[RMDB]
Chemical mapping of a 177-nucleotide RNA with DMS and 2A3. DMS adducts were read by reverse transcription with MarathonRT.
RNA sequence: GGGAACGACUCGAGUAGAGUCGAAAAGAGCAAUGCCGCGUGCGGGAUGAAGCGUCUUGACGUGUAAACCGCUGUCAGGGGGUCGAACCAAUGAUUGCCCCCAGAGGAAGUGGCGACUAACUCUGUGCUUGGUAAGGAUGUUCGCAUCCUUACCAAGAAAAGAAACAACAACAACAAC
Reactivity to DMS in 0.01 (KOAc 150mM, MgCl2 10mM, bicine 150mM(pH8.5), 24C), signal-to-noise 2, nucleotides 027 to 126: g010a010g000c050a050a080u010g000c020c000g080c010g010u020g010c010g050g010g000a010u020g030a260a300g000c010g000u010c040u020u000g000a010c020g010u010g000u000a050a300a300c010c010g020c000u040g000u010c010a100g000g020g000g000g000u010c160g000a050a150c020c120a050a070u000g010a100u000u000g010c000c000c000c000c000a090g020a050g000g010a030a060g010u000g010g010c020g020a040c080u000a170a100c030u000c050u010g010u000g030
Reactivity to 2A3 in 0.01 (KOAc 150mM, MgCl2 10mM, bicine 150mM(pH8.5), 24C), signal-to-noise 2, nucleotides 027 to 126: g070a000g030c100a140a080u140g000c000c010g000c010g020u080g010c000g000g000g000a050u300g000a100a000g000c000g040u000c080u220u230g130a040c010g000u040g000u020a000a020a010c000c000g000c030u030g040u040c050a040g020g010g000g000g000u100c080g090a080a050c090c090a110a080u130g100a120u070u110g020c010c000c000c040c010a000g010a020g030g030a040a120g010u000g010g030c010g040a030c020u040a090a020c000u000c000u010g090u080g060
Overview:
Reactivities are rounded to 0.1 and cut off at 0 and 3. The reactions ran in a buffer of 150 mM KOAc, 10 mM MgCl2 and 150 mM bicine (pH 8.5), at 24 C.